Conditions: 150 mM KOAc, 10 mM MgCl2 and 150 mM bicine (pH 8.5), 24 C. Chemical mapping of a 177-nucleotide RNA with 2A3 and DMS. Source: RMDB library OK2TRN, as collected in RNAgym. For 2A3 the reverse transcriptase was SuperScript II with manganese.

RNA sequence: GGGAACGACUCGAGUAGAGUCGAAAAUGGUGAGCGGAACCGCAAGAGCGCGUUGUGGCGUUCCUUGCUCGUCGGCGUCGCCGCGUCGAUGAUUUGGGCUUGAGGGAAACGAUGCGCGGCGAUCAGGUACGACUCUGAAAUUCGUUUCAGAGUCGUAAAAAGAAACAACAACAACAAC
Reactivity to 2A3 in 0.01 (KOAc 150mM, MgCl2 10mM, bicine 150mM(pH8.5), 24C), signal-to-noise 5, nucleotides 027 to 126: u150g030g000u070g010a020g000c030g030g020a010a060c030c020g000c020a020a010g010a010g060c070g000c070g060u060u150g080u080g170g010c040g040u020u010c020c010u040u120g000c010u000c020g020u010c020g040g060c040g030u020c020g000c040c010g000c000g020u030c060g030a110u110g030a060u100u090u110g070g010g020c080u090u110g040a100g030g050g020a060a090a030c050g050a080u140g020c010g000c000g030g000c010g000a020u040c020a020g110g020
Reactivity to DMS in 0.01 (KOAc 150mM, MgCl2 10mM, bicine 150mM(pH8.5), 24C), signal-to-noise 6, nucleotides 027 to 126: u010g010g010u010g010a070g010c020g010g000a070a060c070c080g020c030a030a050g000a100g010c060g010c030g020u000u010g020u010g010g020c070g010u000u000c070c020u000u010g020c020u000c030g010u000c030g010g010c070g000u000c020g010c040c030g020c010g020u000c040g010a080u000g010a150u000u000u010g000g000g010c080u010u000g010a130g000g010g010a100a080a100c100g010a080u000g000c040g010c020g010g010c010g010a040u000c120a060g010g010